Structure probing data (DMS and 2A3) for a 207-nucleotide construct. The DMS profile rests on 6,755 reads.
RNA sequence: GGGAACGACUCGAGUAGAGUCGAAAAGGGGUCCCAUUCGAUGUCUCUAGCGUGCCCUUGGAUUUAGGAACUGAAGCCUCCACGGUUCCUUGUCAGGGUCGGGCUAGAAUGGGACGGAGGCACCCAAAAGAACUCAUGGCUUCGGCCAUGAGUUCAACUUAAUUACGUAGUUCGCUACGUAAUUAAGAAAAGAAACAACAACAACAAC
Reactivity to DMS in 0.01 (KOAc 150mM, MgCl2 10mM, bicine 150mM(pH8.5), 24C), signal-to-noise 2, nucleotides 027 to 156: g000g020g010g000u000c000c010c010a080u000u000c030g020a130u010g030u010c030u000c070u000a060g030c100g000u000g000c000c000c000u020u010g020g010a100u000u000u000a040g020g010a030a020c010u000g000a030a150g000c030c000u000c020c020a300c000g010g010u000u000c000c000u000u010g000u000c080a060g010g040g050u000c040g020g000g000c010u020a100g010a040a030u000g010g020g020a040c010g030g020a030g080g050c020a150c030c000c000a060a070a110a150g010a020a010c000u000c000a020u000g000g040c000u000u000c300g050g010c000c000a000u000g000a000g020u000u000c000a020a140
Reactivity to 2A3 in 0.01 (KOAc 150mM, MgCl2 10mM, bicine 150mM(pH8.5), 24C), signal-to-noise 7, nucleotides 027 to 156: g080g010g020g010u000c010c000c000a000u010u010c030g100a120u170g090u030c050u050c080u240a120g090c150g300u250g030c040c010c030u100u200g170g020a170u250u200u200a010g000g000a000a000c000u000g020a100a000g020c010c010u000c010c000a030c010g000g000u010u010c010c010u000u040g050u030c090a060g020g000g020u040c050g010g010g000c010u010a040g000a000a010u000g000g000g000a000c010g000g000a000g010g000c010a040c000c000c000a030a110a010a070g000a000a000c000u000c000a000u010g000g000c010u080u110c300g090g000c000c000a000u000g000a000g000u000u000c000a000a000

DMS adducts were read by reverse transcription with MarathonRT. The data come from the RNA Mapping Database (RMDB), library RNAMAK. Values cover nucleotides 27 to 156.